[RMDB]
RNA sequence: GGGAACGACUCGAGUAGAGUCGAAAACUCCCUUCUCCACACUCCUUCCCCCCUGCGGGGCCCCCCCAUAAGAUGGCGAGAUCUCCACUCAUUGGGUCCUUCGUCCAUCUCCUUUUCUUACCUUUGGCAAGCUUAAUCUUCGGAUUAAGCAAAAGAAACAACAACAACAAC
Reactivity to 2A3 in 0.01 (KOAc 150mM, MgCl2 10mM, bicine 150mM(pH8.5), 24C), signal-to-noise 6, nucleotides 027 to 129: c030u010c000c000c000u000u030c030u010c010c010a050c010a020c050u090c010c010u040u100c010c000c000c000c000c000u070g030c130g000g000g000g040c010c000c000c000c000c000c000a030u040a030a010g030a020u030g000g020c010g000a010g010a040u040c120u040c060c000a070c050u180c040a180u110u160g020g000g000u020c020c000u040u050c020g050u020c000c020a010u000c010u030c010c000u080u050u050u040c020u030u080a110c000c000u110u050u070g070g000c050a040a020
Reactivity to DMS in 0.01 (KOAc 150mM, MgCl2 10mM, bicine 150mM(pH8.5), 24C), signal-to-noise 4, nucleotides 027 to 129: c120u030c020c030c020u010u050c000u040c000c000a070c100a060c000u040c010c080u010u030c020c010c000c010c000c050u040g070c150g040g020g090g050c030c020c000c010c000c000c010a040u000a040a020g030a030u060g000g000c030g030a050g020a080u040c040u050c020c010a080c240u000c060a120u070u040g010g020g000u000c090c080u020u020c010g040u050c000c000a070u000c040u000c030c030u010u010u000u000c030u000u020a130c010c040u000u000u000g030g020c090a050a150